[RMDB]
RNA sequence: GGGAACGACUCGAGUAGAGUCGAAAAGGAAAUUUCAUUAGGCCUUGUUAGCUGCUCUGUCUCCGCUGCCAAGGGGAUUGGAUACGGCUGAUGGCUGUACAACACGGAUCCAUUUCCUCUUUUGGAACGAGGAUACUGACUUCGGUCAGUAUCCUCGAAAAGAAACAACAACAACAAC
Reactivity to 2A3 in 0.01 (KOAc 150mM, MgCl2 10mM, bicine 150mM(pH8.5), 24C), signal-to-noise 2, nucleotides 027 to 126: g100g020a090a110a060u160u160u240c090a060u110u200a060g000g040c000c010u030u100g040u020u040a000g000c010u050g000c000u000c020u030g050u010c000u000c020c000g070c100u070g010c020c010a000a010g000g000g000g000a000u010u100g000g000a010u080a030c050g000g000c100u070g060a080u120g090g000c070u070g040u090a040c060a170a010c030a050c150g050g000a010u000c010c000a010u110u100u040c010c000u040c010u000u070u010u150g060g030a060a110
Reactivity to DMS in 0.01 (KOAc 150mM, MgCl2 10mM, bicine 150mM(pH8.5), 24C), signal-to-noise 2, nucleotides 027 to 126: g010g010a070a120a070u080u000u010c070a160u030u020a010g010g010c010c000u000u020g060u020u010a040g010c040u000g000c300u000c000u030g000u000c000u000c020c000g000c120u020g000c050c110a040a010g000g000g000g010a040u000u000g000g050a000u000a070c040g000g050c060u000g040a090u050g000g080c070u060g000u000a080c110a080a120c150a160c030g000g000a060u000c000c000a020u020u020u000c000c000u000c080u000u000u020u000g000g030a160a110